[RMDB]
An RNA of 177 nucleotides, treated with 2A3 and DMS and read out base by base. Conditions: 150 mM KOAc, 10 mM MgCl2 and 150 mM bicine (pH 8.5), 24 C. For 2A3 the reverse transcriptase was SuperScript II with manganese. DMS adducts were read by reverse transcription with MarathonRT.
RNA sequence: GGGAACGACUCGAGUAGAGUCGAAAAGACGACUGCGUCCCUGUUCUUUGUACACACCGCCCGUCGUUAUCUAAGAUGGUGCUAUGUUCGAAGAGGGUUUUCCUUCUGAGGACGUAGGAUUAGAUUGCAUUAUCGAUCAGUUCGCUGAUCGAUAAUGAAAAGAAACAACAACAACAAC
Reactivity to 2A3 in 0.01 (KOAc 150mM, MgCl2 10mM, bicine 150mM(pH8.5), 24C), signal-to-noise 3, nucleotides 027 to 126: g020a000c000g000a020c050u050g040c050g010u030c000c020c000u000g060u050u030c070u090u100u160g120u120a010c020a000c010a010c060c020g040c020c020c040g000u010c020g020u060u080a070u050c030u060a050a060g040a140u120g020g040u100g080c000u010a010u010g000u010u000c000g000a010a010g000a020g030g020g040u040u080u100u210c000c000u030u040c010u010g020a040g010g000a000c000g000u000a000g020g000a000u000u020a030g080a090u000u170g040
Reactivity to DMS in 0.01 (KOAc 150mM, MgCl2 10mM, bicine 150mM(pH8.5), 24C), signal-to-noise 6, nucleotides 027 to 126: g000a050c050g010a070c030u000g010c050g010u000c020c030c040u000g000u000u000c070u000u010u000g020u010a080c150a080c080a060c130c040g000c040c060c070g020u000c030g000u010u000a060u000c070u010a040a060g010a100u010g010g010u000g000c000u000a000u000g010u000u000c010g000a270a020g000a020g000g010g010u000u010u000u010c000c000u000u000c010u000g000a300g000g010a010c000g020u000a000g000g000a090u000u010a030g000a090u000u000g010